[RMDB]
RNA sequence: GGGAACGACUCGAGUAGAGUCGAAAAUAUUUUAUAUCAUGAGUUUCUGUUACAUUUAUUGUGUUUUCAAGUACAUCAUACAAUACAUGAUCAACUGCUCUGAUUACAUUGUUAAUGGAAAUUACACUAAUAGUCUAAGGUUCGCCUUAGACUAUUAAAAAGAAACAACAACAACAAC
Reactivity to 2A3 in 0.01 (KOAc 150mM, MgCl2 10mM, bicine 150mM(pH8.5), 24C), signal-to-noise 5, nucleotides 027 to 126: u060a020u010u220u150u140a150u020a030u110c070a080u150g070a020g040u000u030u030c020u010g010u040u050a010c000a000u030u040u080a090u070u070g010u000g010u040u010u000u020c030a060a030g030u040a050c040a110u040c000a010u030a070c080a170a070u080a120c060a020u030g010a040u010c060a120a080c010u000g000c000u020c030u050g010a010u000u020a000c020a030u030u040g030u060u060a020a030u030g000g030a030a030a120u120u040a060c110a010c040
Reactivity to DMS in 0.01 (KOAc 150mM, MgCl2 10mM, bicine 150mM(pH8.5), 24C), signal-to-noise 5, nucleotides 027 to 126: u050a040u040u040u030u030a090u020a060u060c050a120u030g000a090g020u000u010u020c050u000g000u010u000a050c020a050u020u010u020a020u020u000g030u010g010u000u000u010u010c070a050a090g020u020a070c180a030u000c020a020u010a040c130a050a070u020a090c150a040u000g000a030u000c070a050a050c080u010g000c010u000c100u010g000a000u000u000a030c080a080u010u010g000u000u000a020a050u000g000g010a020a030a030u010u010a070c130a080c130

Annotation:
The record gives the reactivity of an RNA of 177 nucleotides to 2A3 and DMS. Reactivities are rounded to 0.1 and cut off at 0 and 3. Conditions: 150 mM KOAc, 10 mM MgCl2 and 150 mM bicine (pH 8.5), 24 C. DMS adducts were read by reverse transcription with MarathonRT. The DMS profile rests on 11,653 reads. It was measured as part of the RMDB library OK1LIB. In probing experiments dimethyl sulfate is read out at A N1 and C N3, which are open when not base-paired.